[RMDB]
RNA sequence: GGGAACGACUCGAGUAGAGUCGAAAAGCCUUCCUUCGUCGGUGAUCCUGCCUCUCCCUGUCGGUGAAUCCUCCCCUGAGAGGCCUCUUCCUAGGCCCGGAGUCUAUCUCCAUCUGGUCCGUCCGGGGUCAAAAUGUAUCUUCGGAUACAUUUUGACAAAAGAAACAACAACAACAAC
Reactivity to DMS in 0.01 (KOAc 150mM, MgCl2 10mM, bicine 150mM(pH8.5), 24C), signal-to-noise 1, nucleotides 027 to 126: g010c050c060u010u010c040c010u010u010c110g020u010c040g030g020u000g000a040u000c060c040u000g000c040c020u000c040u000c030c040c010u000g000u010c070g010g020u000g000a130a120u010c020c020u010c020c020c010c060u000g010a090g010a110g010g010c030c040u000c030u010u000c030c010u010a090g010g000c010c010c080g000g000a090g000u000c110u000a160u010c020u000c010c030a110u000c040u000g020g010u000c060c020g020u010c010c020g000g020g000
Description
Source: RMDB library 15KREP, as collected in RNAgym. The record gives the reactivity of an RNA of 177 nucleotides to DMS.